[RMDB]
RNA sequence: GGGAACGACUCGAGUAGAGUCGAAAAGAUGAGGAAGAAGCCGGCUGCGAUGCGCUUGGUGAUGGACAUGACGUUCCUUUCGUCGGUGUGUUCCGUGUAAAGGCAACGCUACGCCACCACCGUGGUUACGUGUCAAGCCCGAGUUCUGCACACGGGGUCCGUACCAGGAGUUCGCUCCUGGUACGGAAAAAGAAACAACAACAACAAC
Reactivity to 2A3 in 0.01 (KOAc 150mM, MgCl2 10mM, bicine 150mM(pH8.5), 24C), signal-to-noise 2, nucleotides 027 to 156: g110a030u140g010a000g090g000a050a060g040a030a030g150c090c110g020g030c050u060g040c100g020a020u120g000c080g030c140u080u130g000g010u020g020a010u020g020g000a010c000a030u070g040a100c000g010u040u010c000c020u010u000u030c100g150u040c020g000g040u080g080u120g080u280u060c020c030g020u020g040u160a010a010a000g030g000c180a020a000c000g000c010u000a020c250g000c000c000a000c000c000a010c000c030g000u050g000g050u180u090a030c010g010u030g010u040c040a040a000g010c020c020c000g010a010g000u050u070c030u110g000c060a020c020a030c120g020g000g000g000

An RNA of 207 nucleotides, treated with 2A3 and read out base by base.